Chemical mapping of a 177-nucleotide RNA with 2A3 and DMS. For 2A3, 8,265 sequencing reads were counted. The reactions ran in a buffer of 150 mM KOAc, 10 mM MgCl2 and 150 mM bicine (pH 8.5), at 24 C. It was measured as part of the RMDB library TTRDES.
[RMDB]
RNA sequence: GGGAACGACUCGAGUAGAGUCGAAAAGAUAUGGAGCUCCACAGGACAUGCUAUGGGAUCGGAAACGAUCCUCAAUAGCAACAGCCUGGGAGCUCCUAAGUCAAACCGUUCGCUUCGGCGAACGGAACCUAGUAAAUCUCUUCGGAGAUUUACUAGGAAAAGAAACAACAACAACAAC
Reactivity to 2A3 in 0.01 (KOAc 150mM, MgCl2 10mM, bicine 150mM(pH8.5), 24C), signal-to-noise 3, nucleotides 027 to 126: g000a000u000a010u060g000g000a000g010c000u030c020c030a240c030a300g010g010a050c160a290u300g000c010u010a010u010g010g000g010a000u000c000g000g000a020a030a000c010g000a000u000c010c000u010c020a060a020u000a000g020c010a220a130c070a080g000c000c000u000g010g020g010a000g000c000u000c000c000u000a000a000g000u000c010a030a050a120c010c010g000u010u010c030g000c040u080u070c300g210g010c000g000a010a000c010g000g020a000a010
Reactivity to DMS in 0.01 (KOAc 150mM, MgCl2 10mM, bicine 150mM(pH8.5), 24C), signal-to-noise 3, nucleotides 027 to 126: g000a020u000a120u020g000g000a020g010c000u010c000c010a090c030a020g020g000a020c110a220u020g010c000u010a010u000g000g000g010a020u000c000g020g000a040a010a070c010g010a010u000c000c020u000c190a040a030u000a000g010c000a110a090c160a140g020c000c000u000g010g000g010a010g010c000u000c000c000u010a000a050g000u000c000a130a150a220c000c000g010u000u000c000g000c010u000u010c230g020g010c010g020a000a000c000g000g000a010a060